[RMDB]
RNA sequence: GGGAACGACUCGAGUAGAGUCGAAAAAAACAAGUACAUUUGGGCAAUAAACUCGAAAAUGACCUACUACGCGAAGCCACGAAGAAUGAUUUUGAUCUUGAACCUAAUUAUUACGCUAACUUCUAUGCUCCUUGUGGCUUAACUGUCUUAUCGUGUACCCUUCAGUUAAGUUCGCUUAACUGAAGGGAAAAGAAACAACAACAACAAC
Reactivity to DMS in 0.01 (KOAc 150mM, MgCl2 10mM, bicine 150mM(pH8.5), 24C), signal-to-noise 2, nucleotides 027 to 156: a060a040a050c020a050a070g020u010a060c030a130u000u000u000g000g000g010c050a090a090u000a080a080a070c040u000c040g020a050a060a080a100u010g030a130c030c030u000a070c070u000a040c060g010c020g000a080a050g020c020c030a070c040g000a080a090g000a050a090u010g000a130u000u020u010u020g020a080u000c020u010u010g010a050a060c030c010u000a030a070u000u000a140u000u020a100c130g000c030u000a050a090c050u000u000c060u040a080u000g020c050u010c040c010u000u000g030u000g010g010c010u030u010a060a050c080u000g000u010c040u000u000a160u010c050g050u010g010u000a250
Reactivity to 2A3 in 0.01 (KOAc 150mM, MgCl2 10mM, bicine 150mM(pH8.5), 24C), signal-to-noise 5, nucleotides 027 to 156: a000a000a040c130a040a040g050u110a050c040a120u060u060u090g020g010g000c030a060a100u090a150a130a060c050u060c100g060a060a060a040a050u070g050a040c030c030u070a050c060u040a030c060g020c040g070a020a000g000c010c010a000c030g030a000a030g040a050a070u080g080a090u030u040u130u120g050a070u070c040u080u170g070a070a070c010c010u030a120a080u100u110a100u100u080a040c040g010c040u020a080a130c010u090u050c030u060a070u210g030c010u030c040c010u010u010g010u010g000g000c000u020u010a050a030c040u040g050u050c040u080u160a150u140c030g010u010g030u120a080